RNA sequence: GGGAACGACUCGAGUAGAGUCGAAAAGAGCAUUCCAUGAGGGCCUAGGCGCCAAGGCCUGAGCUGGUGGGCAUGCUGACCUCCUCCUGACCAGACUGGCAGAGUGCCAAGCCUGGCAAUGGGCCAGUCACUGAAUGACGUUCGCGUCAUUCAGUGAAAAAGAAACAACAACAACAAC
Reactivity to DMS in 0.01 (KOAc 150mM, MgCl2 10mM, bicine 150mM(pH8.5), 24C), signal-to-noise 8, nucleotides 027 to 126: g000a050g020c030a060u000u010c010c010a050u000g010a220g010g010g010c010c020u000a070g010g010c050g030c090c180a090a090g000g020c000c010u000g010a130g010c070u000g020g020u010g000g010g020c220a040u000g010c010u000g000a140c060c020u000c020c030u000c020c020u000g010a130c070c060a100g000a040c010u000g000g010c010a160g010a130g020u000g010c000c010a050a150g020c100c090u000g000g020c030a050a060u010g000g010g010c020c030a060g010
Reactivity to 2A3 in 0.01 (KOAc 150mM, MgCl2 10mM, bicine 150mM(pH8.5), 24C), signal-to-noise 4, nucleotides 027 to 126: g080a000g000c040a050u050u050c020c010a010u090g120a190g130g040g000c030c020u070a070g030g020c040g050c110c060a040a040g140g000c000c020u030g010a030g030c030u100g040g000u030g020g000g000c100a050u070g000c030u070g070a110c000c020u030c000c010u010c000c010u050g050a100c030c000a020g020a050c000u000g000g000c030a040g050a050g300u070g030c010c000a030a040g090c020c030u010g010g000c010a010a090u080g020g030g010c030c000a010g000